[RMDB]
RNA sequence: GGGAACGACUCGAGUAGAGUCGAAAAGGAUUCUGUUAAACGCCAGCAGCGGGAACUGGCCGCUGUGGGAAUUAAUACCCGCAAUCUUGCACAUGAUGAGCAGGGGCUGAAAAACCGUAUCAGUGAAACCACCGCACAGCUUAACCGUCAGCGUGACUAUUAACUAAUGCUUCGGCAUUAGUUAAUAAAAAGAAACAACAACAACAAC
Reactivity to 2A3 in 0.01 (KOAc 150mM, MgCl2 10mM, bicine 150mM(pH8.5), 24C), signal-to-noise 2, nucleotides 027 to 156: g090g000a080u100u060c030u070g020u080u080a170a120a070c050g020c010c010a020g000c020a010g030c080g030g000g030a090a100c080u070g130g010c020c010g000c010u000g000u040g010g010g030a040a030u110u140a100a040u060a120c000c010c000g000c020a010a050u030c010u060u120g040c040a060c000a090u120g000a000u030g020a070g000c080a090g010g000g000g050c000u050g050a090a040a000a040a040c080c020g040u060a030u090c010a010g000u020g060a060a030a030c020c010a010c010c010g020c020a040c040a040g010c000u090u050a070a030c020c030g040u050c030a010g030c010g080u050g010a000c050
Reactivity to DMS in 0.01 (KOAc 150mM, MgCl2 10mM, bicine 150mM(pH8.5), 24C), signal-to-noise 1, nucleotides 027 to 156: g040g000a120u000u000c050u000g000u000u030a080a100a110c060g050c020c020a020g020c000a070g060c040g000g000g000a150a100c130u000g000g010c010c040g020c000u010g030u000g000g000g000a090a190u000u000a060a110u000a090c000c020c000g080c090a060a090u010c060u030u010g000c080a100c180a090u010g000a090u000g000a160g000c030a100g020g000g020g000c010u000g010a060a050a110a110a090c080c040g000u000a110u000c070a090g030u010g030a090a090a090c070c010a060c020c010g010c080a050c030a000g000c020u000u000a120a100c030c010g020u000c060a060g010c040g070u000g030a130c120